[RMDB]
RNA sequence: GGGAACGACUCGAGUAGAGUCGAAAAAGAUGAUUCAUUAGAAAAUACUUUCCAUGUAUGGUGUACAUCAGACAAUUUAUUAAAAGGUGCUGCAUUAAAUGCUGUACAAGUAUUGGAACAAGUUAUGCGUACGUUAUUCUUUCGAGAAUAACGUACGAAAAGAAACAACAACAACAAC
Reactivity to DMS in 0.01 (KOAc 150mM, MgCl2 10mM, bicine 150mM(pH8.5), 24C), signal-to-noise 5, nucleotides 027 to 126: a100g010a100u010g010a130u010u000c030a110u000u010a120g000a140a070a040a070u000a030c010u000u000u000c060c040a110u010g010u000a020u000g000g010u010g010u010a070c130a020u010c040a030g010a140c130a050a080u000u000u000a080u010u000a080a040a100a100g010g000u000g000c080u000g010c100a030u000u000a040a100a060u000g010c020u000g020u000a010c070a070a070g000u000a050u000u000g010g000a040a060c140a040a060g010u000u010a060u000g010
Reactivity to 2A3 in 0.01 (KOAc 150mM, MgCl2 10mM, bicine 150mM(pH8.5), 24C), signal-to-noise 5, nucleotides 027 to 126: a000g080a090u160g010a030u090u090c050a040u120u240a060g100a060a120a010a030u090a020c010u050u060u010c030c010a040u070g000u030a020u030g040g000u020g020u040a050c030a030u030c030a020g060a050c030a070a120u080u190u140a170u080u300a130a170a030a010g140g000u090g090c030u010g000c030a000u020u130a100a250a070u070g000c010u020g000u000a000c000a020a020g030u030a090u070u090g040g010a040a030c050a080a050g040u120u050a100u210g070